[RMDB]
RNA sequence: GGGAACGACUCGAGUAGAGUCGAAAAUCAAUUAGCAGUAUCAAUGUUAGCAGCUUAAUUCCUCGCUGUUAGAGGAUCGCUAGCCGUAAUAGUAGUUAAUUGUAGAUUAUUAACUAUUAUCGUAUCUCAAGUCUUAAUCUAAUAGAAAUUCUAAUUGCUUCUGAGGAAGGUUCGCCUUCCUCAGAAGAAAAGAAACAACAACAACAAC
Reactivity to 2A3 in 0.01 (KOAc 150mM, MgCl2 10mM, bicine 150mM(pH8.5), 24C), signal-to-noise 1, nucleotides 027 to 156: u100c000a000a060u090u100a030g030c030a000g080u230a040u180c110a110a150u080g010u040u000a000g000c010a010g000c000u160u240a050a030u200u090c000c000u020c000g000c080u120g110u160u080a130g020a000g000g000a030u070c030g080c000u040a040g000c020c000g000u020a000a000u000a000g000u000a000g000u040u000a000a030u000u000g030u040a010g010a010u000u000a000u010u000a020a000c000u000a000u000u000a020u060c000g020u010a050u070c060u080c050a030a260g010u000c070u010u000a010a000u000c000u010a040a030u040a130g040a080a080a000u050u020c030u060a150a210u040u300g030